[RMDB]
Source: RMDB library OK1LIB, as collected in RNAgym. Chemical mapping of a 177-nucleotide RNA with DMS and 2A3. For 2A3 the reverse transcriptase was SuperScript II with manganese. The RNA was probed in 150 mM KOAc, 10 mM MgCl2 and 150 mM bicine (pH 8.5) at 24 C.

RNA sequence: GGGAACGACUCGAGUAGAGUCGAAAAGACACCCUUCGCAGAUGACCUCCUCGUUGGUGGGUGUCGGAUCUGUUGUCAGUCACAGGCAACAGUUAACGAUCUGCGUAAAUAAAAAGAGAAGAACAAACCGAUUAUGAUAUUUCGAUAUCAUAAUCGGAAAAGAAACAACAACAACAAC
Reactivity to DMS in 0.01 (KOAc 150mM, MgCl2 10mM, bicine 150mM(pH8.5), 24C), signal-to-noise 3, nucleotides 027 to 126: g010a030c030a000c000c000c010u020u050c030g000c010a000g010a020u000g000a040c020c010u010c190c030u010c090g000u040u030g010g030u000g000g000g040u010g010u010c000g010g000a150u000c000u010g000u010u000g020u000c000a060g000u000c290a110c280a110g000g000c000a000a010c010a010g000u000u010a020a020c000g000a000u010c010u000g030c000g010u080a040a070a080u060a030a070a070a070a090g020a130g000a120a060g000a060a100c120a060a090a140
Reactivity to 2A3 in 0.01 (KOAc 150mM, MgCl2 10mM, bicine 150mM(pH8.5), 24C), signal-to-noise 9, nucleotides 027 to 126: g010a000c000a010c010c010c000u050u090c020g000c010a000g000a010u010g020a020c000c000u040c010c010u170c110g130u150u180g010g000u020g010g000g000u000g000u000c000g000g020a040u030c000u000g000u000u000g010u000c010a060g130u140c090a060c030a150g020g000c000a000a000c000a000g000u000u050a010a010c020g010a000u000c000u000g000c000g010u010a010a050a050u170a010a060a030a020a000g170a020g050a160a030g050a050a010c060a100a060a020